[RMDB]
RNA sequence: GGGAACGACUCGAGUAGAGUCGAAAAUUGGCUAUCGGCCAGGACGCUCCGAUAGAGGUGGUCCGCGAGGGUCGGCAUGUGACGCUGACGGUGAAACCGGACCCCGAUAGCACCUAGAGUGUUCGCCGAAUGGGCGGAGAUUCGUCUCCGCCCAUUCAAAAGAAACAACAACAACAAC
Reactivity to DMS in 0.01 (KOAc 150mM, MgCl2 10mM, bicine 150mM(pH8.5), 24C), signal-to-noise 2, nucleotides 027 to 126: u020u010g010g030c000u000a030u000c030g000g000c070c140a170g010g010a030c040g000c030u000c020c090g010a090u020a030g010a200g000g010u000g040g000u000c000c000g000c110g010a240g030g010g000u000c010g020g000c030a110u000g010u010g020a140c150g000c000u000g000a020c000g010g010u010g020a070a140a270c170c010g000g010a030c010c010c000c000g020a120u010a030g000c050a140c110c040u010a170g010a040g020u000g010u000u000c030g020c130c100
Reactivity to 2A3 in 0.01 (KOAc 150mM, MgCl2 10mM, bicine 150mM(pH8.5), 24C), signal-to-noise 2, nucleotides 027 to 126: u070u030g090g000c020u030a030u160c060g000g000c050c030a050g000g000a020c030g040c140u010c010c030g090a100u070a190g100a060g040g030u120g020g010u010c000c000g000c030g060a120g070g060g000u000c000g000g000c000a060u200g200u240g300a040c100g000c030u000g000a010c020g030g190u140g090a150a080a050c000c000g020g020a020c000c040c000c000g020a020u040a060g070c030a070c020c020u020a030g040a020g080u060g060u020u050c040g040c110c080